[RMDB]
RNA sequence: GGGAACGACUCGAGUAGAGUCGAAAAAUUAUUCUAAAAGUGAUUAAAUGAAGAUACGUCACAGAAAGUAUGCUUUGAAAUCAAGAUGUGGGGAAAACCUGUAGUUCUGAGUAGGCCUGAUAGAAUCAGCCUAUAUUAAGUUCGCUUAAUAUAGGCUAAAAGAAACAACAACAACAAC
Reactivity to 2A3 in 0.01 (KOAc 150mM, MgCl2 10mM, bicine 150mM(pH8.5), 24C), signal-to-noise 2, nucleotides 027 to 126: a000u100u040a020u040u040c000u030a130a040a080a090g020u020g010a050u100u110a080a220a280u150g040a040a010g040a080u030a060c070g010u010c050a030c030a100g120a030a100a000g020u050a020u080g040c010u000u050u080g070a110a090a050u060c010a060a010g010a100u110g010u110g050g020g000g030a030a070a050a090c000c010u000g030u040a060g030u080u000c020u010g030a010g040u020a010g030g040c010c010u050g050a070u100a130g110a040a030u210c040
Reactivity to DMS in 0.01 (KOAc 150mM, MgCl2 10mM, bicine 150mM(pH8.5), 24C), signal-to-noise 5, nucleotides 027 to 126: a080u020u010a060u010u010c020u010a060a080a130a170g000u010g000a050u000u000a080a130a130u010g010a080a060g000a040u000a030c110g010u000c080a050c130a110g010a100a080a100g010u000a030u000g010c020u000u000u000g010a050a060a050u010c050a050a070g000a050u000g020u000g000g000g000g000a090a060a100a080c070c030u000g010u010a060g010u000u000c050u000g010a090g010u000a040g010g010c040c020u000g000a100u010a060g010a060a120u000c180